The record gives the reactivity of an RNA of 177 nucleotides to DMS and 2A3.
RNA sequence: GGGAACGACUCGAGUAGAGUCGAAAAGGCACCGUGCCGAUCACGGCGCCCGUGCCGAACAGGAUCAUCGACAUGCGGCGGCCGAUCUUGUCGGACAACGCGCCGAACACCGGCUGCAUCAGCAUGAUAGCCCUAUACUCUUCGGAGUAUAGGGCUAAAAAGAAACAACAACAACAAC
Reactivity to DMS in 0.01 (KOAc 150mM, MgCl2 10mM, bicine 150mM(pH8.5), 24C), signal-to-noise 3, nucleotides 027 to 126: g000g040c000a050c050c300g020u000g020c110c060g000a140u000c190a070c040g000g020c020g040c010c040c150g000u010g020c010c000g000a130a120c090a050g000g000a150u010c130a060u000c080g020a220c000a020u000g040c030g000g000c030g000g000c020c010g010a020u000c110u020u000g010u000c000g000g010a020c030a120a150c300g000c200g000c000c010g000a050a020c120a050c040c010g010g010c000u000g000c000a090u000c050a130g020c000a010u000g010a240
Reactivity to 2A3 in 0.01 (KOAc 150mM, MgCl2 10mM, bicine 150mM(pH8.5), 24C), signal-to-noise 2, nucleotides 027 to 126: g020g020c020a000c010c040g030u000g020c030c040g050a120u300c140a090c180g000g000c000g020c000c050c020g030u010g000c000c010g020a020a100c110a060g070g060a110u120c020a050u120c120g140a100c020a000u040g030c050g020g010c000g000g030c020c020g060a070u000c130u150u180g040u020c010g000g020a010c020a210a140c290g060c130g010c040c000g040a050a030c030a000c020c000g010g000c000u030g000c000a090u100c010a110g000c000a000u000g030a020

Record summary:
Values cover nucleotides 27 to 126. For 2A3, 1,635 sequencing reads were counted. The RNA was probed in 150 mM KOAc, 10 mM MgCl2 and 150 mM bicine (pH 8.5) at 24 C.